[RMDB]
RNA sequence: GGGAACGACUCGAGUAGAGUCGAAAAGAUAUGGACCCUAAGUAGGGAGCUGUGUCGGAAACGACCAGCAUCGAUCUACAAGGGUCCUAAGUCAAAACAUAUGAUGGAGUUCGCUCCAUCAUAUGAACCUUAUAGACACGUUCGCGUGUCUAUAAGGAAAAGAAACAACAACAACAAC
Reactivity to DMS in 0.01 (KOAc 150mM, MgCl2 10mM, bicine 150mM(pH8.5), 24C), signal-to-noise 5, nucleotides 027 to 126: g000a020u000a170u020g000g010a020c000c000c000u000a110a140g010u000a010g020g020g000a040g030c000u000g000u020g030u000c000g010g000a030a050a110c000g000a010c000c000a010g000c010a070u000c050g020a080u010c000u000a000c010a220a080g000g000g010u000c000c010u010a000a070g000u000c020a100a060a120a240c010a000u000a000u000g010a010u000g000g000a020g010u000u020c270g000c010u000c000c000a010u010c000a000u000a000u000g000a080a170
Reactivity to 2A3 in 0.01 (KOAc 150mM, MgCl2 10mM, bicine 150mM(pH8.5), 24C), signal-to-noise 6, nucleotides 027 to 126: g010a010u030a020u080g000g000a000c000c000c030u070a300a080g010u000a030g110g300g040a010g000c020u040g050u090g010u300c000g000g010a030a020a020c000g000a000c000c000a000g000c020a040u110c010g080a160u050c000u000a010c000a040a030g010g000g000u010c000c000u010a000a000g010u000c010a000a020a120a210c010a000u000a000u020g000a010u010g010g010a010g030u080u110c190g120c150u000c000c000a000u000c000a000u000a000u000g000a000a000